[RMDB]
RNA sequence: GGGAACGACUCGAGUAGAGUCGAAAACACAGGAUCGUGUGGAAGACCUGCUCGGGGCGGAAGCAUUAAAACCAUUCGAGCUAGUCAAUGCGUGGCGUGUCUCUCCGCAGCGUGUUGGCGAAUGUAACAAGCUGCCUCUCGUUCGCGAGAGGCAGAAGCUGAUAGUAACGUUCGCGUUACUAUCAGCAAAAGAAACAACAACAACAAC
Reactivity to 2A3 in 0.01 (KOAc 150mM, MgCl2 10mM, bicine 150mM(pH8.5), 24C), signal-to-noise 3, nucleotides 027 to 156: c030a010c010a020g290g130a300u290c170g030u020g000u010g030g000a040a020g000a020c000c000u000g010c010u000c010g000g010g000g000c000g010g050a030a000g070c050a050u130u170a080a020a010a060c050c000a020u090u120c110g020a030g090c060u090a040g050u020c000a010a020u000g000c000g010u020g040g000c010g030u090g070u020c050u000c010u040c110c010g000c010a000g000c000g000u000g010u010u000g000g000c010g000a010a020u060g030u110a070a100c090a120a020g030c000u000g000c000c010u000c000u000c000g010u030u030c130g020c020g080a010g000a010g000g010c000a010g000a000a000
Reactivity to DMS in 0.01 (KOAc 150mM, MgCl2 10mM, bicine 150mM(pH8.5), 24C), signal-to-noise 1, nucleotides 027 to 156: c030a000c000a220g020g060a100u010c150g000u020g000u020g050g020a300a300g000a050c060c010u000g000c040u010c040g060g060g050g020c000g000g000a050a190g040c040a060u000u000a050a070a040a150c000c000a150u000u000c040g000a130g040c030u000a140g020u000c000a030a020u000g040c020g010u000g020g020c000g030u000g000u000c170u000c000u030c300c030g010c010a040g000c020g020u000g010u000u000g000g030c040g000a090a030u000g010u020a040a220c060a110a120g010c000u000g000c000c020u000c000u020c000g020u000u020c300g150c000g000a050g000a040g000g010c010a000g030a060a060